Source: RMDB library M2RFPK, as collected in RNAgym. This 207-nucleotide RNA was probed chemically with 2A3. The RNA was probed in 150 mM KOAc, 10 mM MgCl2 and 150 mM bicine (pH 8.5) at 24 C.
[RMDB]
RNA sequence: GGGAACGACUCGAGUAGAGUCGAAAACGUUGUCAUCGACAACACCCUAUGCAUUCAUGCUCUGUAAAGAUGCGCCGAAAGGUGAGCAAGCCCGAGUUGCCCAGACCUGAAAUGCAACACUUUAGAGAAAACCCGAAGCAGUUCGCUGCUUCGGGAACUUUCAUGCAACCUUCGGGUUGCAUGAAAGAAAAGAAACAACAACAACAAC
Reactivity to 2A3 in 0.01 (KOAc 150mM, MgCl2 10mM, bicine 150mM(pH8.5), 24C), signal-to-noise 1, nucleotides 027 to 156: c080g020u000u000g010u020c110a240u150c270g000a000c000a000a010c000a060c000c030c010u080a110u140g030c030a000u010u020c030a020u100g000c040u030c010u030g090u160a080a080a080g050a040u080g010c000g000c010c000g060a110a110a020g000g000u030g050a090g010c010a050a030g070c010c000c010g140a140g010u040u240g000c000c010c010a000g000a020c000c020u030g060a090a030a020u110g000c010a100a000c040a050c120u180u300u250a010g010a000g090a070a190a020a050c010c000c000g000a000a000g000c000a040g030u030u130c190g060c140u000g000c030u000u010c000g020g030g000a000a000